Notes: Structure probing data (2A3 and DMS) for a 207-nucleotide construct. For 2A3, 5,068 sequencing reads were counted. For 2A3 the reverse transcriptase was SuperScript II with manganese. The data come from the RNA Mapping Database (RMDB), library M2RFPK.

RNA sequence: GGGAACGACUCGAGUAGAGUCGAAAAGGCUGCGUUUCACUCUAGGGUACGUGAUAGUGCGAUAUAAGAAGCACUGGUACAUGCCGGCAGGGACAGUUAAGAGAUGGCCGCAGUCUCGUGUCCCUGCAAAAGGAGUUCUCGUUCGCGAGAACUCCAACCCUUAAGUGAUGUUCGCAUCACUUAAGGGAAAAGAAACAACAACAACAAC
Reactivity to 2A3 in 0.01 (KOAc 150mM, MgCl2 10mM, bicine 150mM(pH8.5), 24C), signal-to-noise 5, nucleotides 027 to 156: g040g020c040u030g020c040g030u050u100u080c070a070c040u080c080u110a060g060g050g020u050a030c050g030u040g060a060u050a040g000u000g000c020g010a040u030a030u070a300a100g120a120a010g010c010a000c000u010g010g000u060a030c010a030u190g020c000c020g020g000c010a000g010g010g020a020c020a080g040u160u140a160a040g030a010g010a040u040g080g040c050c020g030c070a010g010u000c000u000c010g020u040g000u000c010c000c010u000g000c010a010a010a000a010g000g000a000g000u000u000c000u000c000g020u060u030c120g020c000g100a000g000a000a000c000u000c000c000a000a020
Reactivity to DMS in 0.01 (KOAc 150mM, MgCl2 10mM, bicine 150mM(pH8.5), 24C), signal-to-noise 2, nucleotides 027 to 156: g040g020c000u010g000c010g000u000u000u000c050a070c050u000c040u010a090g030g020g040u000a020c030g000u000g000a090u000a040g030u010g000c010g000a170u000a080u010a130a210g020a200a290g010c010a030c000u000g010g000u000a050c030a080u000g020c000c020g010g010c020a020g000g000g010a040c030a060g030u000u000a090a150g000a060g020a060u000g020g040c160c120g000c060a170g020u000c010u000c000g000u020g000u000c000c000c000u000g010c050a040a020a070a130g010g010a010g010u000u000c010u000c000g020u000u010c210g020c000g000a030g010a010a020c010u000c000c010a010a020